[RMDB]
RNA sequence: GGGAACGACUCGAGUAGAGUCGAAAAUUGUCGUCCGAUUCCUAUACAAUGAGUUCAACUUGGUUCCAGGGCUACUCAAUUCAGACUGGAGAUCAUUUGGUCGAAAUCUAGGAAACAGAGGAGAGCAGUAGGACGUAUAUUUCGAUAUACGUCCUACAAAAGAAACAACAACAACAAC
Reactivity to DMS in 0.01 (KOAc 150mM, MgCl2 10mM, bicine 150mM(pH8.5), 24C), signal-to-noise 8, nucleotides 027 to 126: u010u010g010u000c050g000u000c020c010g000a190u000u000c010c010u010a050u010a100c210a090a090u010g000a220g000u000u010c040a020a070c100u000u000g020g010u000u000c010c010a060g010g000g020c030u000a060c130u000c160a060a170u010u010c120a040g010a130c030u000g000g000a080g010a040u000c040a050u000u000u000g000g010u000c030g000a080a080a080u000c070u000a040g000g010a040a060a110c110a040g000a090g000g000a130g010a070g020c150a110
Reactivity to 2A3 in 0.01 (KOAc 150mM, MgCl2 10mM, bicine 150mM(pH8.5), 24C), signal-to-noise 4, nucleotides 027 to 126: u050u050g080u050c040g070u010c000c000g020a060u030u000c000c000u050a040u020a160c090a080a120u120g020a040g070u010u070c030a030a050c080u010u030g010g000u030u010c010c010a020g060g080g000c030u040a040c030u060c130a060a170u160u110c010a020g020a050c000u010g000g010a100g030a060u000c000a050u010u030u070g030g000u030c000g010a050a030a040u010c010u010a020g060g000a020a040a030c050a040g060a040g070g030a020g020a030g060c060a030